[RMDB]
RNA sequence: GGGAACGACUCGAGUAGAGUCGAAAAGAAAAUCGGCAAAGUUAUUUCAUAUAGACAAGAAUUUCGCUGUUGUCUAUAAUGAUGUCAACAGCAGACUUGAAAGAGAUUCCUGAAAGGAAGAUAUAGCUGAAAAUAUCGGAUUCGUCCGAUAUUUUCAAAAAGAAACAACAACAACAAC
Reactivity to 2A3 in 0.01 (KOAc 150mM, MgCl2 10mM, bicine 150mM(pH8.5), 24C), signal-to-noise 1, nucleotides 027 to 126: g030a000a030a000a020u130c020g060g000c090a130a050a000g010u010u060a190u130u230u070c100a090u040a050u040a190g030a090c000a010a070g050a140a080u080u190u000c080g000c010u070g000u150u040g000u000c000u000a050u040a130a090u090g080a030u100g040u000c050a000a000c000a010g070c030a000g000a000c050u000u040g020a030a030a000g040a000g000a000u030u050c000c000u010g030a120a010a030g080g060a020a050g030a030u040a000u230a220g110c010
Reactivity to DMS in 0.01 (KOAc 150mM, MgCl2 10mM, bicine 150mM(pH8.5), 24C), signal-to-noise 2, nucleotides 027 to 126: g000a090a040a060a040u010c080g000g000c100a090a130a190g010u000u000a030u020u000u010c050a070u000a040u000a050g000a050c040a070a080g010a060a140u000u000u010c100g010c100u010g000u000u040g000u000c000u000a030u000a030a080u000g020a050u000g010u020c040a000a010c020a040g010c030a140g010a030c040u000u000g000a080a110a140g000a020g000a160u000u000c000c020u000g000a090a130a100g000g010a010a060g000a100u000a060u010a100g030c190